[RMDB]
RNA sequence: GGGAACGACUCGAGUAGAGUCGAAAAUGUGAGAUCAAGGGGUGCCAUUUAGUCUCCUUCCUGGGUCAGUCGGAUGGAGCCAGGCUUUCCUUACAUCUCCAGGAGGGGCCUCAGACUCUCUGAAGGCAUGACGCCAACGAUUCGUCGUUGGCGUCAUAAAAGAAACAACAACAACAAC
Reactivity to DMS in 0.01 (KOAc 150mM, MgCl2 10mM, bicine 150mM(pH8.5), 24C), signal-to-noise 1, nucleotides 027 to 126: u000g010u000g010a030g020a040u000c220a070a080g000g020g010g010u000g020c000c000a200u010u000u010a090g000u000c010u000c000c000u000u040c000c000u000g060g000g000u000c180a150g000u030c180g000g000a020u000g000g010a020g010c060c300a160g010g010c040u000u010u010c000c000u010u000a160c190a050u000c000u000c000c050a110g000g000a120g030g010g030g020c030c010u010c030a070g000a180c080u020c270u010c010u000g010a080a100g040g000c080